[RMDB]
RNA sequence: GGGAACGACUCGAGUAGAGUCGAAAAUCAUACUUGAUAGUAGAUAUUGGGAGUCAAGGUCUCUACUAUCGAGUAUGAGCACUACUUGUAGACUAGACUGUGAUUCCCAAUGUCUAUAAGAGGUGUAGUAUCAGGUCGUAUUCGUACGAUCUGAUACAAAAGAAACAACAACAACAAC
Reactivity to DMS in 0.01 (KOAc 150mM, MgCl2 10mM, bicine 150mM(pH8.5), 24C), signal-to-noise 6, nucleotides 027 to 126: u030c030a030u010a030c010u010u000g000a060u010a080g000u000a010g000a030u000a010u000u010g010g010g000a060g020u010c060a040a000g010g010u000c010u000c080u000a060c010u000a010u030c030g010a000g010u000a000u010g010a080g020c110a050c130u010a090c010u010u000g010u000a010g000a150c150u010a040g000a020c040u010g010u030g010a090u000u000c000c000c000a020a020u000g000u000c010u000a010u010a060a140g010a000g020g000u010g000u020a130
Reactivity to 2A3 in 0.01 (KOAc 150mM, MgCl2 10mM, bicine 150mM(pH8.5), 24C), signal-to-noise 9, nucleotides 027 to 126: u050c010a010u040a110c000u010u020g010a010u040a050g010u000a000g010a010u010a010u010u010g020g010g030a060g060u090c020a010a010g030g010u000c010u000c000u030a110c000u000a000u080c020g000a000g000u000a010u030g010a010g020c020a010c020u040a010c000u000u010g000u000a000g010a040c030u010a010g010a010c020u030g050u040g060a030u020u000c000c000c000a000a020u030g000u000c000u000a000u010a020a020g010a000g000g010u020g000u030a050
Chemical mapping of a 177-nucleotide RNA with DMS and 2A3.
For DMS the reverse transcriptase was MarathonRT.
For DMS, 27,854 sequencing reads were counted.
For 2A3 the reverse transcriptase was SuperScript II with manganese.
High DMS reactivity at an A or C suggests that its Watson-Crick edge is free.
The RNA was probed in 150 mM KOAc, 10 mM MgCl2 and 150 mM bicine (pH 8.5) at 24 C.